[RMDB]
RNA sequence: GGGAACGACUCGAGUAGAGUCGAAAAUGGUUGGUCAAGCGGGACUGGUACCAUGACCUUGCGUUGCCCUGGACCUCACCUGCCGCUGAUUACUGGCAUGACAUGGAUAGACAAAUUGACUUUGGAGGAUGGAGCGUGAAUUCGUUCACGCUCCAUCAAAAGAAACAACAACAACAAC
Reactivity to 2A3 in 0.01 (KOAc 150mM, MgCl2 10mM, bicine 150mM(pH8.5), 24C), signal-to-noise 1, nucleotides 027 to 126: u100g050g000u030u000g000g030u040c040a040a020g100c080g030g070g060a130c060u050g070g020u050a090c000c010a000u020g090a100c000c000u020u090g000c070g130u120u110g050c020c000c000u000g070g000a040c000c010u010c010a020c010c010u040g030c020c010g000c020u000g030a140u030u130a060c070u050g000g050c010a050u110g020a000c020a080u110g080g000a030u030a040g090a050c060a100a140a120u090u000g030a050c090u050u080u080g070g010a120g130
Reactivity to DMS in 0.01 (KOAc 150mM, MgCl2 10mM, bicine 150mM(pH8.5), 24C), signal-to-noise 2, nucleotides 027 to 126: u020g020g000u000u020g010g000u000c020a100a070g020c100g000g000g020a080c070u020g030g060u020a080c040c020a070u000g020a090c020c020u000u010g000c140g020u000u000g020c030c000c000u000g020g010a060c060c010u000c040a050c020c040u000g000c040c050g030c070u020g020a210u010u020a050c090u000g000g010c040a110u000g000a080c070a110u010g010g000a150u000a050g000a100c160a030a020a110u010u000g010a100c110u000u000u000g020g020a180g000